[RMDB]
RNA sequence: GGGAACGACUCGAGUAGAGUCGAAAAGUUGCCGUUCGCGGCAACAAGAGUUGUGCUUCGGCACAACUCAGGUCAAGCUACGGCUUGACCAAGCACUCGUUCGCGAGUGCAGUAGCCGUACGCGGCUACAACUCAGGCUACGGCCUGAGACCAUUCGGUGACGAAUGGAAUUGGUAUGUAAGCUACUUCUUCCAGUAGCUGCGUCAUAACAUCAAGGUUAUGCAUACUGAGCCGAAGCUCAGCUUCGGUCCUCCAAGGAAGACCAUAGUCGGCAGUUCGCUGCCGACAAAAGAAACAACAACAACAAC
Reactivity to 2A3 in 0.01 (KOAc 150mM, MgCl2 10mM, bicine 150mM(pH8.5), 24C), signal-to-noise 6, nucleotides 027 to 266: g000u000u000g000c010c000g020u050u100c300g020c020g100g000c010a000a000c000a000a030g010a000g000u000u000g000u000g000c020u060u130c300g100g000c000a000c000a010a000c000u010c000a010g000g010u000c000a000a000g000c010u040a030c300g130g000c010u010u000g000a000c000c000a010a010g000c000a000c000u000c010g040u080u090c200g040c010g130a000g000u000g000c020a010g000u000a000g000c010c000g010u040a030c260g020c010g110g000c000u000a000c000a010a050c000u000c000a000g000g000c000u030a070c290g160g000c000c000u000g000a000g000a010c000c000a000u000u000c000g030g040u070g060a050c010g000a000a000u000g000g010a010a100u030u040g010g000u000a000u000g000u000a000a010g000c000u000a000c000u080u110c000u010u000c010c000a000g000u000a000g000c000u000g000c000g000u010c000a000u000a000a010c010a060u300c200a180a030g300g000u000u000a000u000g000c000a000u000a000c000u000g010a000g000c000c000g000a000a000g020c040u120c300a080g000c000u010u000c010g000g000u010c000c020u160c030c020a130a050g000g000a000a000g010a000c010c050a100u160a110
Reactivity to DMS in 0.01 (KOAc 150mM, MgCl2 10mM, bicine 150mM(pH8.5), 24C), signal-to-noise 2, nucleotides 027 to 266: g000u000u010g000c000c000g020u010u030c170g030c000g000g010c010a000a000c030a100a120g000a000g010u000u010g010u000g000c000u000u090c120g010g030c000a010c000a000a010c000u000c020a060g010g010u010c010a000a020g000c010u010a110c140g040g000c000u030u000g000a010c000c010a060a090g010c010a010c000u000c000g020u000u010c210g020c020g000a000g000u010g010c010a070g010u000a000g010c000c000g020u010a090c180g020c020g010g000c000u000a000c000a130a180c010u000c000a010g000g010c000u000a090c180g050g010c000c000u000g000a000g000a240c040c000a010u010u000c000g000g000u000g000a140c010g020a000a010u000g000g020a210a040u000u000g000g000u000a000u000g010u000a300a270g000c000u000a000c020u010u030c010u000u010c000c020a160g010u000a010g000c000u000g000c020g030u000c000a010u000a010a000c000a170u000c280a120a130g000g010u000u000a000u000g000c000a000u000a000c010u000g010a020g010c010c000g000a010a010g000c000u060c220a090g010c000u000u010c000g000g010u010c190c110u000c140c130a170a080g010g000a020a030g020a300c300c100a080u000a060